[RMDB]
RNA sequence: GGGAACGACUCGAGUAGAGUCGAAAAUUCUGCCGUUAAGUUGCAAAAUAAUGAGAUCAAACCUUCAGGUCUAAAAACCAUGGUUGUGUCUGCGGGUCAAGAGCAAACUAACUGUAAUACUAGUUCCAGAGCUAGAACUUCGGUUCUAGCAAAAGAAACAACAACAACAAC
Reactivity to 2A3 in 0.01 (KOAc 150mM, MgCl2 10mM, bicine 150mM(pH8.5), 24C), signal-to-noise 8, nucleotides 027 to 129: u080u010c010u030g040c000c010g020u020u040a070a010g020u040u030g030c010a020a100a050a070u200a030a160u200g040a030g020a070u090c070a090a050a070c020c000u120u120c140a050g000g010u010c050u180a040a030a040a020a000c030c010a040u070g050g000u020u030g050u020g020u030c020u050g060c040g040g010g040u060c040a040a000g040a030g070c020a030a040a040c000u030a020a010c020u020g030u050a030a030u040a210c090u050a050g050u030u000c020c010a030g020a010
Reactivity to DMS in 0.01 (KOAc 150mM, MgCl2 10mM, bicine 150mM(pH8.5), 24C), signal-to-noise 6, nucleotides 027 to 129: u030u010c050u020g030c000c070g010u040u030a080a100g020u030u040g030c070a090a060a060a040u050a000a100u050g010a000g050a010u060c100a080a030a070c040c030u010u000c250a050g020g000u040c050u080a040a050a040a060a060c040c020a100u050g020g020u000u050g020u040g000u040c030u030g020c090g000g000g000u040c030a040a010g020a140g000c060a040a030a090c100u020a010a010c060u010g010u070a020a010u000a070c130u030a110g000u010u000c010c020a060g020a300
Conditions: 150 mM KOAc, 10 mM MgCl2 and 150 mM bicine (pH 8.5), 24 C.
An RNA of 170 nucleotides, treated with 2A3 and DMS and read out base by base.
In probing experiments dimethyl sulfate is read out at A N1 and C N3, which are open when not base-paired.
For DMS the reverse transcriptase was MarathonRT.
2A3 adducts were read by reverse transcription with SuperScript II with manganese.